[RMDB]
The record gives the reactivity of an RNA of 207 nucleotides to 2A3. Reactivities are given for positions 27 through 156. The 2A3 profile rests on 433 reads.
RNA sequence: GGGAACGACUCGAGUAGAGUCGAAAAGCUCUGGAAUUGAGGCCCCUCUAACAAUAAUCCAAAACUACUUCGCAGAGUAAUCUGCCGAAUCGUUGGAUGCCCAUUACUAUCUAUUUUUGGAGCAUCUAAAACUGUCAGUGCUUCGGCACUGACAGAACAGAUCCAAGAUGUUCGCAUCUUGGAUCUGAAAAGAAACAACAACAACAAC
Reactivity to 2A3 in 0.01 (KOAc 150mM, MgCl2 10mM, bicine 150mM(pH8.5), 24C), signal-to-noise 1, nucleotides 027 to 156: g010c000u000c000u000g060g050a070a030u080u070g000a020g020g080c000c020c030c000u170c180u170a090a120c000a140a150u230a080a030u010c030c000a010a040a000a080c010u050a010c010u100u020c040g000c010a000g010a030g020u090a110a130u000c000u000g020c040c060g010a020a030u010c030g020u100u010g040g000a020u000g000c010c010c010a030u040u050a050c040u060a210u300c030u100a290u120u100u000u030u090g020g000a210g050c000a000u000c000u080a000a000a060a120c000u010g010u000c000a000g000u000g000c010u030u140c280g000g000c000a000c010u000g000a000c000a000g010a000a000